About this RNA
The record gives the reactivity of an RNA of 177 nucleotides to DMS and 2A3. The 2A3 profile rests on 22,266 reads. For 2A3 the reverse transcriptase was SuperScript II with manganese. The reactions ran in a buffer of 150 mM KOAc, 10 mM MgCl2 and 150 mM bicine (pH 8.5), at 24 C. Reactivities are given for positions 27 through 126. The DMS profile rests on 35,787 reads. As a SHAPE reagent, 2A3 marks flexible, mostly unpaired nucleotides at the ribose 2'-OH. Source: RMDB library OK1LIB, as collected in RNAgym.

[RMDB]
RNA sequence: GGGAACGACUCGAGUAGAGUCGAAAACGCGGUGGUCACCGACAGCGAAACCAGGUACUUGUCGGCUCCGGAGGUGGCGAUGACGUGGCGCCGGGAGGUGUUGAGGGUCAUGUCGUUUUCGCGGUAGCACAGUAAGCAACUUCGGUUGCUUACUGUGAAAAGAAACAACAACAACAAC
Reactivity to DMS in 0.01 (KOAc 150mM, MgCl2 10mM, bicine 150mM(pH8.5), 24C), signal-to-noise 8, nucleotides 027 to 126: c060g010c040g000g010u010g010g020u010c050a110c030c020g000a050c080a070g010c060g000a060a080a120c070c040a100g000g010u010a090c110u010u010g000u010c040g000g010c060u010c020c030g010g010a150g000g010u010g000g010c050g000a070u020g000a070c060g020u010g000g000c030g020c020c020g000g010g010a100g010g020u010g000u000u000g000a130g000g000g000u000c040a070u010g000u010c020g010u010u000u010u000c030g020c050g000g000u020a100g020
Reactivity to 2A3 in 0.01 (KOAc 150mM, MgCl2 10mM, bicine 150mM(pH8.5), 24C), signal-to-noise 9, nucleotides 027 to 126: c040g010c020g010g030u100g030g050u060c020a010c050c010g020a040c020a020g040c030g070a100a030a030c030c020a040g070g020u070a090c060u070u090g090u100c020g030g050c020u030c020c030g080g000a070g020g030u060g030g010c020g030a060u070g020a030c060g040u040g020g010c060g050c030c020g020g040g020a110g030g050u100g040u070u100g060a120g030g010g000u020c020a040u070g020u030c020g020u030u020u050u080c050g000c030g030g050u060a020g050